[RMDB]
RNA sequence: GGGAACGACUCGAGUAGAGUCGAAAAAAUUGGGCUAAUACACAUAAUGCAGAAGAAUUACUCACACACUACAUUGACGAGAUAUAUAAACUAUAUCCUAUCCUUUUUGUUGUGUUUGAAAAGAUUGAUAGUUUUGAUGAACAGCUUAAAAUUAUUCCAGAACGGUCUAGUUCGCUAGACCGUUCUGAAAAGAAACAACAACAACAAC
Reactivity to 2A3 in 0.01 (KOAc 150mM, MgCl2 10mM, bicine 150mM(pH8.5), 24C), signal-to-noise 1, nucleotides 027 to 156: a010a040u160u060g030g000g000c030u030a030a000u130a140c070a010c010a170u170a280a040u170g070c030a020g010a080a020g010a140a070u120u060a070c000u010c000a000c000a000c000a020c190u090a000c010a030u070u040g020a010c040g070a030g000a130u000a000u000a000u010a010a300a030c020u000a000u000a000u040c010c010u020a070u210c030c000u070u000u140u070u000g000u000u000g000u010g040u000u010u030g100a110a110a020a020g180a030u130u160g010a030u100a070g010u010u070u160u110g130a160u090g010a000a060c010a020g110c000u000u010a020a020a020a020u100u120a080u150u090c020